Chemical mapping of a 177-nucleotide RNA with DMS and 2A3.
The DMS profile rests on 851 reads.
The data come from the RNA Mapping Database (RMDB), library OK1LIB.
The RNA was probed in 150 mM KOAc, 10 mM MgCl2 and 150 mM bicine (pH 8.5) at 24 C.
For DMS the reverse transcriptase was MarathonRT.
RNA sequence: GGGAACGACUCGAGUAGAGUCGAAAAGAAGGAGGAGAGAGUGAGCCGCCGAGGCCCAACAUGUCCCGGCGUGUGAUUAAUUCCGCGGUGCUGCUUCUCCUCUUCGUGAUGAUGUGCCGCGGCAGUGCGUGGCAUGCACGUUCGCGUGCAUGCCACGAAAAGAAACAACAACAACAAC
Reactivity to DMS in 0.01 (KOAc 150mM, MgCl2 10mM, bicine 150mM(pH8.5), 24C), signal-to-noise 1, nucleotides 027 to 126: g140a080a000g000g270a000g000g000a000g000a000g000a210g030u000g020a190g090c000c000g000c000c040g050a180g060g000c010c060c180a250a190c300a070u000g000u000c000c000c020g300g000c030g010u170g030u000g000a070u080u170a130a150u000u000c000c000g000c000g150g000u020g000c000u000g130c030u000u000c000u000c000c000u000c010u010u000c090g000u080g000a300u030g000a150u040g000u000g000c000c000g000c000g000g070c220a000g000u010g000
Reactivity to 2A3 in 0.01 (KOAc 150mM, MgCl2 10mM, bicine 150mM(pH8.5), 24C), signal-to-noise 2, nucleotides 027 to 126: g090a010a010g020g000a020g020g030a000g020a020g040a000g090u170g140a070g000c000c000g010c010c010g040a300g030g000c020c040c040a070a030c150a100u300g020u090c020c000c000g020g030c000g020u100g000u050g030a050u180u230a090a070u300u020c000c000g000c000g040g000u040g040c000u090g000c000u010u090c010u000c000c030u000c000u020u090c030g140u080g020a090u150g000a030u010g010u000g000c010c010g000c000g010g000c010a040g080u080g040